RNA sequence: GGGAACGACUCGAGUAGAGUCGAAAAGAUGCGCUGAAUUUUAUGAAGGUGUUCAGCAAAGGUUUGUUCACUUUCCUGGUGAUUCUGGUGGGCUAUAACGCCGCCCAGGCAUUUGGCGGCACGGGCACCGUGCUGACUAUUUCGAUAGUCAGCACGGAAAAGAAACAACAACAACAAC
Reactivity to 2A3 in 0.01 (KOAc 150mM, MgCl2 10mM, bicine 150mM(pH8.5), 24C), signal-to-noise 4, nucleotides 027 to 126: g050a040u110g010c050g000c050u020g020a040a070u040u090u150u200a180u240g080a080a040g070g020u040g020u050u010c020a000g010c000a130a130a020g150g020u070u080u070g040u030u040c030a020c010u000u040u030c010c020u040g060g000u060g050a090u090u030c020u040g030g010u050g060g020g030c030u040a050u060a300a040c110g010c000c000g030c010c010c000a030g060g000c040a080u040u030u070g020g000c030g000g060c010a010c020g010g010g010c020a010
Reactivity to DMS in 0.01 (KOAc 150mM, MgCl2 10mM, bicine 150mM(pH8.5), 24C), signal-to-noise 6, nucleotides 027 to 126: g010a090u000g020c140g020c020u000g010a040a030u000u020u010u010a110u010g010a090a080g010g020u000g010u000u000c030a030g010c040a090a130a140g010g010u000u010u000g010u000u000c030a050c030u000u000u000c020c080u010g010g020u000g010a110u000u000c040u000g010g020u000g010g000g010c030u010a100u010a090a110c210g020c000c010g020c040c010c090a090g010g000c090a050u010u010u000g020g000c020g010g000c020a050c090g000g010g020c190a140